This 177-nucleotide RNA was probed chemically with 2A3 and DMS.
Values are in units of 0.01, from 0 to 300, in steps of 10.
For 2A3 the reverse transcriptase was SuperScript II with manganese.
For 2A3, 22,337 sequencing reads were counted.
The DMS profile rests on 15,438 reads.
[RMDB]
RNA sequence: GGGAACGACUCGAGUAGAGUCGAAAACGAUAAGCAUUCGUGCUUAUCGACGGUACGAAAGUACAAAGGAGCAAAAGCAUCGGCUGCUAAAAACGAUGCAAAAGACAACGGGGUUCGCCCCGUUGAAUAAGCAAUAGUAGUUCGCUACUAUUGCUUAAAAAGAAACAACAACAACAAC
Reactivity to 2A3 in 0.01 (KOAc 150mM, MgCl2 10mM, bicine 150mM(pH8.5), 24C), signal-to-noise 6, nucleotides 027 to 126: c000g000a000u000a000a000g010c000a010u030u130c190g100u040g000c000u010u000a000u000c000g010a010c030g070g000u000a000c000g040a150a040a030g010u010a010c040a030a160a040g210g030a050g010c020a010a050a140a060g000c000a010u010c000g030g000c030u120g040c110u300a120a040a020a030a020c010g000a000u010g000c000a000a060a020a000g060a030c000a000a000c000g000g010g000g020u040u050c160g130c010c000c000c000g000u000u000g000a000a010
Reactivity to DMS in 0.01 (KOAc 150mM, MgCl2 10mM, bicine 150mM(pH8.5), 24C), signal-to-noise 9, nucleotides 027 to 126: c020g000a010u000a000a000g010c000a030u000u010c190g030u000g010c000u000u000a000u000c000g010a080c180g000g010u000a000c000g010a130a090a180g010u000a000c010a080a120a150g010g000a050g010c040a060a080a100a120g000c000a000u000c000g010g010c070u000g010c060u010a050a040a030a040a090c010g010a010u000g010c000a060a050a100a100g010a180c010a010a000c000g000g000g010g010u000u000c240g010c010c000c000c000g000u000u000g000a060a090